[RMDB]
RNA sequence: GGGAACGACUCGAGUAGAGUCGAAAACGGAUCACCCAAACGUGCCUUCGCCUCCCGAUACAUCUCGACAAGCACGCCGCGGGCGUACGGAUGGCGCACCCGCGUCGGCGAAUACGUGUACCAGGAAGUGGCAUUUAGUCUUCGGACUAAAUGCCACAAAAGAAACAACAACAACAAC
Reactivity to DMS in 0.01 (KOAc 150mM, MgCl2 10mM, bicine 150mM(pH8.5), 24C), signal-to-noise 1, nucleotides 027 to 126: c150g000g000a060u000c050a070c000c000c000a030a090a090c070g010u000g000c060c000u020u000c070g000c040c010u000c000c030c000g020a050u000a080c070a020u020c100u000c080g020a070c200a140a090g020c060a080c040g030c070c000g040c040g000g000g010c010g000u000a040c060g000g010a160u000g000g010c030g010c050a030c000c010c010g060c000g020u000c000g020g000c000g010a060a130u010a030c080g010u000g010u000a050c010c010a110g000g110a110a110
Reactivity to 2A3 in 0.01 (KOAc 150mM, MgCl2 10mM, bicine 150mM(pH8.5), 24C), signal-to-noise 1, nucleotides 027 to 126: c030g030g040a060u050c030a100c060c030c000a030a090a000c050g010u010g060c000c000u040u020c050g020c000c020u000c000c000c000g000a020u030a080c020a060u010c070u030c060g160a090c020a080a030g060c070a040c190g000c010c010g020c000g010g000g010c010g040u090a090c010g060g120a100u150g040g060c040g000c030a110c050c000c000g000c000g080u020c040g000g000c000g030a090a000u060a050c040g050u020g000u000a060c000c010a030g090g050a150a050
The record gives the reactivity of an RNA of 177 nucleotides to DMS and 2A3. The DMS profile rests on 892 reads. The reactions ran in a buffer of 150 mM KOAc, 10 mM MgCl2 and 150 mM bicine (pH 8.5), at 24 C.